[RMDB]
Annotation
Chemical mapping of a 207-nucleotide RNA with 2A3. 2A3 adducts were read by reverse transcription with SuperScript II with manganese. For 2A3, 1,438 sequencing reads were counted. The reactions ran in a buffer of 150 mM KOAc, 10 mM MgCl2 and 150 mM bicine (pH 8.5), at 24 C.

RNA sequence: GGGAACGACUCGAGUAGAGUCGAAAAACUAAUCCAAAGCAAGUAGAGGAGAACAGGUUUUUAACUAUUUUUAGGCAGAUAAAAAAUAGUAUUUGACAGUCUAACACUAACUGAACAAUAAGUGUUAAAAAGUCGUCUCUGUUCGCAGAGACGACAAGUAGCACUAGCUGUUCGCAGCUAGUGCUACAAAAGAAACAACAACAACAAC
Reactivity to 2A3 in 0.01 (KOAc 150mM, MgCl2 10mM, bicine 150mM(pH8.5), 24C), signal-to-noise 2, nucleotides 027 to 156: a000c030u040a050a020u030c020c020a040a010a000g000c020a040a020g030u050a020g050a050g060g040a060g020a050a080c130a210g030g080u030u010u010u040u040a040a000c010u010a020u010u020u030u000u030a030g030g050c090a050g080a150u150a040a100a000a000a000a000u010a000g010u010a050u040u050u070g030a010c010a000g010u020c010u000a000a000c000a000c000u000a020a000c000u010g040a030a010c020a020a000u030a020a000g020u010g010u020u020a010a060a020a010a010g000u000c000g010u000c000u000c000u000g080u080u060c210g010c080a000g000a000g000a000c000g000a000c000a010a000